Source: RMDB library OK2TST, as collected in RNAgym.
The record gives the reactivity of an RNA of 177 nucleotides to 2A3 and DMS.
For DMS the reverse transcriptase was MarathonRT.
The reactions ran in a buffer of 150 mM KOAc, 10 mM MgCl2 and 150 mM bicine (pH 8.5), at 24 C.
The DMS profile rests on 1,080 reads.
[RMDB]
RNA sequence: GGGAACGACUCGAGUAGAGUCGAAAAAUUCUAAUUUACCUUCUGUUACAAGAUAUGCCACAAUAAUAUCUUACUUAUUGAGAGACAAUGUUGAAUUGUCUGCUGUGUUUGCUGCAACAGAGGAGGACCACUACGGGUGAUUCGUCACCCGUAGUGGAAAAGAAACAACAACAACAAC
Reactivity to 2A3 in 0.01 (KOAc 150mM, MgCl2 10mM, bicine 150mM(pH8.5), 24C), signal-to-noise 1, nucleotides 027 to 126: a000u100u030c010u040a030a100u010u030u300a150c010c000u060u020c000u020g060u000u000a020c020a110a060g020a090u080a050u100g020c000c020a000c000a060a010u090a070a000u040a050u090c080u080u050a090c010u080u060a050u070u090g080a060g000a000g020a030c000a010a010u020g000u050u240g150a080a040u020u010g000u000c000u000g070c010u040g000u050g000u070u090u080g000c020u030g000c000a000a000c000a010g000a010g000g010a040g000g050a020
Reactivity to DMS in 0.01 (KOAc 150mM, MgCl2 10mM, bicine 150mM(pH8.5), 24C), signal-to-noise 2, nucleotides 027 to 126: a190u010u000c040u030a120a120u020u020u000a160c040c010u000u000c000u010g010u000u010a020c060a020a070g010a130u000a060u000g030c030c180a200c060a010a050u000a010a020u010a090u030c160u000u000a110c160u010u000a030u000u010g000a130g000a040g000a020c010a010a010u000g010u010u010g000a160a030u000u000g000u000c000u000g040c070u000g000u000g020u010u000u020g020c120u010g000c040a010a010c020a000g020a040g010g000a100g000g010a150